[RMDB]
RNA sequence: GGGAACGACUCGAGUAGAGUCGAAAAGCUAGUCCAUCUGCUAUGUGAGCAGGGUGGGCGACACCGUCAAAUUGCGGGGAUCUCCUAUAGCUCAUCGUACCCGCUCAGCGCUCGAAAGGGCGCUGUGCUCAAGGUAACAAUCGGUGAGAUGCGACAACUUUUGGAUUGUGUUCGCACAAUCCAAAAGAAAAGAAACAACAACAACAAC
Reactivity to DMS in 0.01 (KOAc 150mM, MgCl2 10mM, bicine 150mM(pH8.5), 24C), signal-to-noise 1, nucleotides 027 to 156: g020c090u000a210g060u000c000c020a030u000c000u000g020c010u000a170u000g020u040g020a090g060c000a040g060g020g030u010g010g050g010c020g020a120c040a140c010c000g000u010c070a040a130a140u020u020g020c000g000g020g000g000a140u000c060u000c020c020u000a060u010a090g000c000u010c020a040u000c040g040u020a200c040c000c200g000c010u000c010a010g020c000g050c010u000c000g010a120a190a220g010g000g060c050g050c000u000g030u000g010c070u010c030a090a030g030g040u010a020a060c010a060a130u020c070g040g010u010g010a060g030a060u030g010c000g030a160c070a070a210
Reactivity to 2A3 in 0.01 (KOAc 150mM, MgCl2 10mM, bicine 150mM(pH8.5), 24C), signal-to-noise 2, nucleotides 027 to 156: g130c120u100a010g020u010c000c000a000u010c000u010g030c010u040a060u270g290u140g300a020g000c020a070g090g000g010u010g010g000g000c000g030a020c020a040c010c030g050u080c100a000a120a200u300u250g000c020g000g000g020g030a070u030c110u050c060c030u070a140u130a200g000c000u020c010a000u000c000g030u000a020c000c000c000g000c010u000c000a000g000c000g000c000u020c010g060a110a040a060g000g000g000c000g000c000u000g000u010g000c010u020c090a040a000g000g000u030a050a050c120a210a050u040c010g000g000u010g020a000g000a000u080g050c030g020a090c100a210a130

Source information:
Conditions: 150 mM KOAc, 10 mM MgCl2 and 150 mM bicine (pH 8.5), 24 C. The record gives the reactivity of an RNA of 207 nucleotides to DMS and 2A3. For 2A3 the reverse transcriptase was SuperScript II with manganese.